[RMDB]
RNA sequence: GGGAACGACUCGAGUAGAGUCGAAAACGAGCUCCAGCUCUCCAGUAACGUUGAUCGUGGGGAUGACGCCCGUGGCGUAGUGGUCAUAGAUCCGCCGAAAUAUGGCGCUGCUGCGGGUGGCCAUGGGAGUUACGCACGAAUUCGUUCGUGCGUAACUAAAAGAAACAACAACAACAAC
Reactivity to DMS in 0.01 (KOAc 150mM, MgCl2 10mM, bicine 150mM(pH8.5), 24C), signal-to-noise 2, nucleotides 027 to 126: c090g010a100g000c020u040c040c000a100g000c040u000c000u000c030c030a110g030u020a070a060c140g000u000u000g010a120u010c090g030u020g030g010g010g000a010u020g040a070c000g030c000c060c000g010u000g020g000c010g040u040a040g010u000g050g000u000c010a030u000a010g000a240u000c020c070g000c240c070g000a030a070a170u010a000u000g000g000c010g010c010u000g000c030u010g010c010g000g000g020u010g010g010c040c010a000u000g000g010g000
Reactivity to 2A3 in 0.01 (KOAc 150mM, MgCl2 10mM, bicine 150mM(pH8.5), 24C), signal-to-noise 2, nucleotides 027 to 126: c020g030a010g060c000u040c060c000a070g040c030u020c050u000c010c000a040g020u060a060a080c100g050u110u090g100a100u050c040g010u070g010g010g000g030a030u060g060a000c000g000c000c000c000g000u000g000g000c070g000u050a000g010u050g200g010u000c000a000u000a000g030a030u030c010c060g060c050c040g070a030a030a030u030a050u050g000g020c030g010c000u010g000c000u000g000c000g000g000g000u000g040g000c010c020a000u020g000g040g000

The data come from the RNA Mapping Database (RMDB), library OK1LIB. Structure probing data (DMS and 2A3) for a 177-nucleotide construct. 2A3 is a SHAPE reagent: it acylates the 2'-hydroxyl of flexible nucleotides of all four kinds. In probing experiments dimethyl sulfate is read out at A N1 and C N3, which are open when not base-paired. The RNA was probed in 150 mM KOAc, 10 mM MgCl2 and 150 mM bicine (pH 8.5) at 24 C. Reactivities are given for positions 27 through 126. The 2A3 profile rests on 1,244 reads. 2A3 adducts were read by reverse transcription with SuperScript II with manganese.